[RMDB]
This 207-nucleotide RNA was probed chemically with 2A3. High 2A3 reactivity points to a flexible backbone, as in loops and unpaired stretches.
RNA sequence: GGGAACGACUCGAGUAGAGUCGAAAAUAGAGUUAGCUAGCUAUGUUUGUAAACAAUAUUCCGAUAUGCUUCGUUAAAGUAAGCCGAUAUUAAACAUUUAUAUAAAUCCAUCCUCACAGGGUCAAUCUGGAGAUAAACUCACCGCUGCAGGGGGCGGGAGGAUAUGACGAUUCGUCGUCAUAUCCUCAAAAGAAACAACAACAACAAC
Reactivity to 2A3 in 0.01 (KOAc 150mM, MgCl2 10mM, bicine 150mM(pH8.5), 24C), signal-to-noise 1, nucleotides 027 to 156: u030a000g110a050g010u070u030a040g040c010u010a000g000c020u120a050u090g070u090u160u090g030u040a090a120a050c060a050a000u010a120u160u170c070c000g050a070u060a050u300g000c050u020u040c040g150u040u140a060a120a120g050u020a020a010g140c000c050g020a070u000a070u090u150a140a070a000c000a010u030u150u090a160u100a000u070a090a100a000u020c000c000a050u030c010c000u080c000a200c040a060g110g000g000u070c040a040a190u040c040u040g020g030a090g050a020u070a050a120a060c010u060c000a040c080c000g000c000u000g000c000a050g020g000g000g040g040c000g000g010